[RMDB]
RNA sequence: GGGAACGACUCGAGUAGAGUCGAAAAUCGCGUCUGCUAACAAUGCACAAUCAGAAGCGGCCACUAGAUCUAUCAACUCUAUAUCCGAGGUGUCAGAAGUGCGUUUUCCAGAACAAUCGAGUGUUAAGGUACGAUAUACCUUCGGGUAUAUCGUACCAAAAGAAACAACAACAACAAC
Reactivity to DMS in 0.01 (KOAc 150mM, MgCl2 10mM, bicine 150mM(pH8.5), 24C), signal-to-noise 2, nucleotides 027 to 126: u000c060g040c010g010u010c010u000g000c100u000a060a160c110a080a070u000g050c070a040c100a160a070u000c080a060g020a070a130g000c030g000g000c080c100a050c120u000a140g000a060u010c030u020a140u000c060a030a050c020u000c010u000a040u000a090u000c130c030g020a040g020g030u010g000u000c020a070g000a030a080g020u000g000c030g000u000u000u000u000c000c070a110g000a060a070c140a090a100u000c100g000a040g030u010g020u000u010a100a040
Reactivity to 2A3 in 0.01 (KOAc 150mM, MgCl2 10mM, bicine 150mM(pH8.5), 24C), signal-to-noise 2, nucleotides 027 to 126: u050c000g000c020g080u010c020u020g040c020u040a080a060c050a090a120u140g020c120a030c020a080a060u040c000a040g060a060a020g050c000g010g020c000c000a030c020u030a040g030a110u000c000u020a080u060c050a080a040c020u000c020u070a030u020a090u150c050c020g040a040g110g000u040g040u010c060a020g030a190a000g090u060g100c040g000u100u000u040u000c030c000a040g050a090a050c040a050a040u150c110g110a050g080u090g010u090u140a090a070
Description
The record gives the reactivity of an RNA of 177 nucleotides to DMS and 2A3. For 2A3 the reverse transcriptase was SuperScript II with manganese. The 2A3 profile rests on 1,315 reads. The RNA was probed in 150 mM KOAc, 10 mM MgCl2 and 150 mM bicine (pH 8.5) at 24 C. It was measured as part of the RMDB library OK2TST.